Structure probing data (DMS and 2A3) for a 177-nucleotide construct. The RNA was probed in 150 mM KOAc, 10 mM MgCl2 and 150 mM bicine (pH 8.5) at 24 C. Source: RMDB library TTRDEL, as collected in RNAgym. DMS adducts were read by reverse transcription with MarathonRT. For 2A3 the reverse transcriptase was SuperScript II with manganese. DMS (dimethyl sulfate) methylates the pairing face of unpaired adenines and cytosines.
RNA sequence: GGGAACGACUCGAGUAGAGUCGAAAAGAUAUGGAUCAUACGGGUCGAUGAAAGUAUUCGGAAACGAAUACUGGAGACCGUAUGAGUCCUAAGUCAAAACUUUGAAUAUCUUCGGAUAUUCAAAGAAGUACUAGAAAUCGUUCGCGAUUUCUAGUACAAAAGAAACAACAACAACAAC
Reactivity to DMS in 0.01 (KOAc 150mM, MgCl2 10mM, bicine 150mM(pH8.5), 24C), signal-to-noise 2, nucleotides 027 to 126: g010a000u000a030u000g000g000a070u000c000a010u000a000c010g020g000g010u020c010g040a090u010g040a190a120a050g010u000a000u000u000c000g040g000a000a010a000c010g020a040a010u000a000c000u000g010g000a010g010a020c000c000g030u000a000u000g000a190g000u000c000c000u010a010a170g000u000c000a110a080a070a170c000u010u000u000g000a020a000u000a000u000c000u010u000c220g030g010a010u000a000u000u000c000a000a020a010g000a100a160
Reactivity to 2A3 in 0.01 (KOAc 150mM, MgCl2 10mM, bicine 150mM(pH8.5), 24C), signal-to-noise 1, nucleotides 027 to 126: g000a000u000a010u020g000g000a020u020c010a010u030a020c080g200g110g220u070c040g130a300u040g000a000a000a000g000u000a000u000u020c020g000g000a000a000a000c000g000a020a000u000a000c000u010g010g010a020g000a010c000c000g020u000a000u000g000a000g010u000c000c000u000a010a000g010u000c020a010a000a130a270c020u010u010u000g000a010a000u010a000u020c010u030u070c300g110g000a000u000a000u000u000c000a020a010a000g000a050a020